[RMDB]
RNA sequence: GGGAACGACUCGAGUAGAGUCGAAAAGAUAGAGCUUCGGCUCUAUCCGAGCGUACUACGGUAACUCGAGGUACUACUAUUAUAUCCCAAAUAGGAUAUAACGAAUAGUACUACCCACCGAGCACCGUAUCGCCGCCGGAGCGUGUUCGCACGCUCCCAGAUCUAUGGACUUCGGUCCAUAGAUCUGAAAAGAAACAACAACAACAAC
Reactivity to DMS in 0.01 (KOAc 150mM, MgCl2 10mM, bicine 150mM(pH8.5), 24C), signal-to-noise 2, nucleotides 027 to 156: g010a090u000a020g000a040g000c030u000u020c300g060g030c000u000c000u000a000u000c010c020g030a080g000c010g020u020a050c090u010a010c020g000g010u000a170a030c020u010c020g010a080g020g000u000a000c010u000a010c010u000a140u000u000a020u000a030u000c000c000c010a070a240a260u000a050g000g010a030u000a000u000a000a010c030g020a060a020u000a030g050u000a000c020u000a010c000c010c020a300c180c000g000a000g050c020a040c000c010g000u010a020u000c040g010c080c020g000c070c060g000g000a060g060c000g030u010g030u000u000c190g050c020a010c010g020c000u000c000c000
Reactivity to 2A3 in 0.01 (KOAc 150mM, MgCl2 10mM, bicine 150mM(pH8.5), 24C), signal-to-noise 8, nucleotides 027 to 156: g040a030u070a010g040a010g030c020u050u050c220g090g010c000u030c000u000a000u000c000c000g030a050g000c010g010u070a070c050u010a000c030g010g010u080a240a110c000u010c010g010a040g010g000u000a000c020u000a000c000u000a010u050u010a010u020a000u010c020c010c060a220a300a270u250a090g000g010a000u020a010u020a080a140c170g100a140a030u010a030g000u000a000c010u010a010c000c020c010a110c050c020g000a000g000c040a000c010c000g010u010a040u300c020g030c040c020g040c040c030g020g000a000g000c020g000u010g050u060u140c280g000c120a000c010g000c000u000c000c000